An RNA of 177 nucleotides, treated with 2A3 and DMS and read out base by base. For DMS the reverse transcriptase was MarathonRT. The reactions ran in a buffer of 150 mM KOAc, 10 mM MgCl2 and 150 mM bicine (pH 8.5), at 24 C. It was measured as part of the RMDB library M2PK90.
[RMDB]
RNA sequence: GGGAACGACUCGAGUAGAGUCGAAAAUUUAAGAGCGUAGAUGUCUCUGUCACGAUACGAGUAAGUGACUCUCGUGUACUACUGACGAAUGAGACAGAGACAUUUAUGCUCAGAGUCAGUCAAGGAAUUCGAAAUGACAAUUCGUUGUCAUUUCGAAAAAAGAAACAACAACAACAAC
Reactivity to 2A3 in 0.01 (KOAc 150mM, MgCl2 10mM, bicine 150mM(pH8.5), 24C), signal-to-noise 3, nucleotides 027 to 126: u100u120u060a190a030g000a000g020c010g000u000a000g000a020u000g000u000c010u000c000u010g000u000c000a010c070g050a030u040a100c010g000a010g000u030a170a140g030u100g200a060c000u010c010u020c100g080u070g010u040a060c010u010a010c030u080g130a070c050g050a120a090u160g020a040g000a070c000a010g000a010g000a000c000a000u010u000u010a000u010g010c000u010c000a000g000a000g000u040c010a000g040u060c020a020a110g070g030a100a130
Reactivity to DMS in 0.01 (KOAc 150mM, MgCl2 10mM, bicine 150mM(pH8.5), 24C), signal-to-noise 4, nucleotides 027 to 126: u000u000u010a110a110g000a020g010c000g040u000a020g010a010u000g010u000c000u000c000u000g010u000c010a110c070g000a090u000a070c030g000a080g010u000a030a070g000u000g000a090c060u000c130u010c180g020u000g010u010a020c030u000a050c040u000g010a140c060g000a130a070u010g000a090g000a010c010a010g000a010g000a020c010a010u000u000u000a010u000g000c000u000c000a030g000a070g010u000c100a070g010u010c080a060a070g000g010a070a200